[RMDB]
RNA sequence: GGGAACGACUCGAGUAGAGUCGAAAAUCCUUUCUCGAUAGAGAUUGGAGUCAUACAACCCCAGAAACCAUUCCUUAUACCUUGAGCAUUGCUGAAUUCAGUUUAGCGUGCAUGCUCUUGGCUAUUCAUACCAAGGACAACUUCGGUUGUCCUUGAAGUUCUCUAAUUAGUUCGCUAAUUAGAGAACAAAAGAAACAACAACAACAAC
Reactivity to DMS in 0.01 (KOAc 150mM, MgCl2 10mM, bicine 150mM(pH8.5), 24C), signal-to-noise 2, nucleotides 027 to 156: u000c000c000u000u000u000c000u010c000g000a300u020a150g010a000g000a030u010u000g010g000a030g020u000c080a140u000a150c080a040a100c040c000c000c030a150g000a140a150a130c070c040a240u000u000c000c010u000u020a230u000a050c010c000u000u000g020a040g020c010a040u000u030g000c020u000g020a040a090u000u000c140a180g000u000u000u000a040g010c030g020u000g030c100a080u000g010c010u010c000u000u000g000g000c060u020a080u010u000c060a130u000a160c110c000a010a010g000g020a030c000a020a000c000u000u000c270g030g000u000u000g000u000c000c000u000u000g000a030a090
Reactivity to 2A3 in 0.01 (KOAc 150mM, MgCl2 10mM, bicine 150mM(pH8.5), 24C), signal-to-noise 8, nucleotides 027 to 156: u010c000c000u010u010u000c060u000c010g220a280u190a270g000a000g000a010u000u020g000g010a010g050u050c050a040u090a210c060a060a170c040c010c020c020a020g140a060a090a040c090c030a140u140u200c030c020u130u130a070u050a140c010c000u000u010g000a000g000c000a020u050u130g000c060u020g020a070a060u160u220c040a150g130u050u050u080a020g020c010g040u050g070c040a000u000g000c000u000c000u000u000g000g000c010u060a040u070u120c060a060u080a180c080c000a000a000g000g000a000c000a000a000c010u060u080c140g080g000u000u000g000u000c000c000u000u000g000a010a000